Structure probing data (DMS and 2A3) for a 177-nucleotide construct. For DMS the reverse transcriptase was MarathonRT. Values cover nucleotides 27 to 126. For DMS, 2,146 sequencing reads were counted.
RNA sequence: GGGAACGACUCGAGUAGAGUCGAAAACGCGAGGAGGUGGAGAUACCAUGCCGACCCGAAGAAGGAAAGGAGGACACGGACGACAAACCGUAGGUACUCUUGCCCUUUAUUGUUGGGUGCACCCUGGGUCAUAUAGUUCCUUCGGGAACUAUAUGACAAAAGAAACAACAACAACAAC
Reactivity to DMS in 0.01 (KOAc 150mM, MgCl2 10mM, bicine 150mM(pH8.5), 24C), signal-to-noise 4, nucleotides 027 to 126: c100g010c060g030a080g020g020a070g010g050u000g010g020a100g020a140u020a040c090c040a050u000g000c060c020g000a070c010c000c010g010a050a100g000a050a020g010g000a070a250a030g010g020a040g000g000a200c110a050c040g010g000a080c070g000a120c300a060a100a050c010c010g020u000a040g020g020u020a150c020u000c000u000u010g000c300c000c010u000u000u000a090u020u000g010u000u010g000g010g000u010g020c110a120c050c050c010u000g030g020
Reactivity to 2A3 in 0.01 (KOAc 150mM, MgCl2 10mM, bicine 150mM(pH8.5), 24C), signal-to-noise 2, nucleotides 027 to 126: c050g040c060g020a050g040g020a020g040g020u030g030g000a150g020a030u180a110c010c030a020u080g090c020c050g100a040c000c000c010g060a060a050g020a010a020g010g010a000a060a000g010g010a020g000g000a010c000a000c020g000g080a070c060g030a010c120a020a090a020c010c010g010u040a100g000g120u090a020c010u020c000u010u020g020c000c000c000u000u060u040a190u060u170g090u010u090g010g010g030u050g000c020a090c010c010c020u060g170g000
The 2A3 profile rests on 2,258 reads.